[RMDB]
RNA sequence: GGGAACGACUCGAGUAGAGUCGAAAAAAAAGAUAUGGAUCUGAACUACAGCCGAAAGGAGCGAAGAACUAGGCUCGGAAACGAGCCUAGGGAGCUCCUAGUAGCUGCUGCAGAUCCUAAGUCAAAACUAAGUACUAUGGUUCGCCAUAGUACUUAGAAAAGAAACAACAACAACAAC
Reactivity to DMS in 0.01 (KOAc 150mM, MgCl2 10mM, bicine 150mM(pH8.5), 24C), signal-to-noise 2, nucleotides 027 to 126: a060a040a060a110g010a060u000a300u010g000g030a000u010c000u020g010a080a120c040u020a130c000a030g030c020c010g020a170a190a060g020g000a020g020c000g000a110a170g000a120a150c000u010a010g000g010c000u000c000g000g000a080a080a160c000g000a030g020c000c000u000a000g000g000g000a060g040c010u000c000c010u000a020g020u000a160g020c030u000g010c100u000g030c020a010g000a000u000c000c010u000a010a100g010u010c030a070a090a070a170
Reactivity to 2A3 in 0.01 (KOAc 150mM, MgCl2 10mM, bicine 150mM(pH8.5), 24C), signal-to-noise 1, nucleotides 027 to 126: a000a000a040a060g090a040u140a060u110g000g000a010u010c000u010g000a080a090c070u180a070c190a000g110c080c000g080a180a050a000g010g010a000g090c020g300a300a030g010a020a060c010u010a030g000g000c000u000c000g020g040a000a070a090c000g000a000g050c130c010u000a020g010g020g000a000g000c000u000c030c000u000a000g010u010a000g000c080u050g000c030u040g000c000a000g010a000u000c000c010u010a100a000g020u000c050a010a000a200a130
Chemical mapping of a 177-nucleotide RNA with DMS and 2A3.
Source: RMDB library TTRDES, as collected in RNAgym.
Conditions: 150 mM KOAc, 10 mM MgCl2 and 150 mM bicine (pH 8.5), 24 C.